[RMDB]
RNA sequence: GGGAACGACUCGAGUAGAGUCGAAAAGAUAUGGACCGGUUAGGGAGCGGAUAUUCGGAAACGAAUAAUCGCAUCGAUCUAACCCGGUCCUAAGUCAAACGACCUAUGGCUUCGGCCAUAGGUCGAAUCUACCGUUAGAGUUCGCUCUAACGGUAGAAAAAGAAACAACAACAACAAC
Reactivity to DMS in 0.01 (KOAc 150mM, MgCl2 10mM, bicine 150mM(pH8.5), 24C), signal-to-noise 2, nucleotides 027 to 126: g010a040u010a190u020g000g000a030c010c010g000g010u000u000a000g060g030g010a140g030c000g010g000a080u000a010u000u010c010g020g010a040a040a060c000g040a010a020u000a000a030u000c010g040c000a290u010c300g000a130u000c000u010a010a030c160c060c050g040g020u000c000c000u000a000a040g010u000c010a110a070a290c030g010a010c000c000u000a010u000g010g010c000u000u010c300g010g010c000c000a000u000a000g000g000u000c000g000a000a040
Reactivity to 2A3 in 0.01 (KOAc 150mM, MgCl2 10mM, bicine 150mM(pH8.5), 24C), signal-to-noise 1, nucleotides 027 to 126: g010a010u040a010u070g000g000a000c010c000g000g020u000u000a050g000g170g120a110g010c000g000g040a040u010a010u030u000c000g010g000a020a030a010c010g010a010a000u020a040a080u030c020g000c040a040u300c210g060a120u000c000u010a010a010c020c050c010g010g000u000c020c010u000a020a000g030u010c010a050a080a170c020g000a000c000c000u010a000u010g000g000c020u120u140c300g180g000c000c000a000u000a020g050g000u000c000g000a000a000
Structure probing data (DMS and 2A3) for a 177-nucleotide construct. 2A3 adducts were read by reverse transcription with SuperScript II with manganese. For DMS, 2,451 sequencing reads were counted. High 2A3 reactivity points to a flexible backbone, as in loops and unpaired stretches. For 2A3, 2,851 sequencing reads were counted. The RNA was probed in 150 mM KOAc, 10 mM MgCl2 and 150 mM bicine (pH 8.5) at 24 C. For DMS the reverse transcriptase was MarathonRT. In probing experiments dimethyl sulfate is read out at A N1 and C N3, which are open when not base-paired.